[RMDB]
RNA sequence: GGGAACGACUCGAGUAGAGUCGAAAAGUGAUAUGGCUGAAUCAUAUCAUCACUAUGAUGUACGUCCGAUGAGUGAUGCAAUAAUAGAUGAACAAGGUGAGCCACUUAGCGAACAAGUGAAUCGUCAAUCCUCUGAAAGCUUCGGCUUUCAGAGGAUAAAAGAAACAACAACAACAAC
Reactivity to 2A3 in 0.01 (KOAc 150mM, MgCl2 10mM, bicine 150mM(pH8.5), 24C), signal-to-noise 3, nucleotides 027 to 126: g040u040g050a040u030a010u040g110g000c130u160g110a090a040u120c020a000u020a010u020c000a000u030c000a000c030u080a080u150g090a000u060g080u140a010c060g120u030c060c020g100a170u080g040a010g010u050g000a030u040g130c000a030a040u170a160a060u050a120g180a090u160g040a030a020c030a140a000g030g010u080g010a010g010c000c000a020c030u050u000a040g040c040g100a030a040c010a140a000g010u000g080a060a040u020c020g030u030c000a030
Reactivity to DMS in 0.01 (KOAc 150mM, MgCl2 10mM, bicine 150mM(pH8.5), 24C), signal-to-noise 2, nucleotides 027 to 126: g030u050g000a020u010a000u000g040g000c070u000g000a090a110u010c030a020u010a030u000c000a010u000c020a080c020u000a010u040g020a080u000g010u000a140c120g000u000c020c060g050a080u040g000a040g030u030g000a050u010g000c060a050a060u020a120a160u010a110g000a020u010g000a100a090c210a180a090g000g040u000g030a070g000c070c010a020c000u000u070a070g000c020g030a000a030c130a080a020g000u010g000a020a070u010c000g000u000c150a050
The record gives the reactivity of an RNA of 177 nucleotides to 2A3 and DMS. Reactivities are rounded to 0.1 and cut off at 0 and 3. The data come from the RNA Mapping Database (RMDB), library OK1LIB. Conditions: 150 mM KOAc, 10 mM MgCl2 and 150 mM bicine (pH 8.5), 24 C.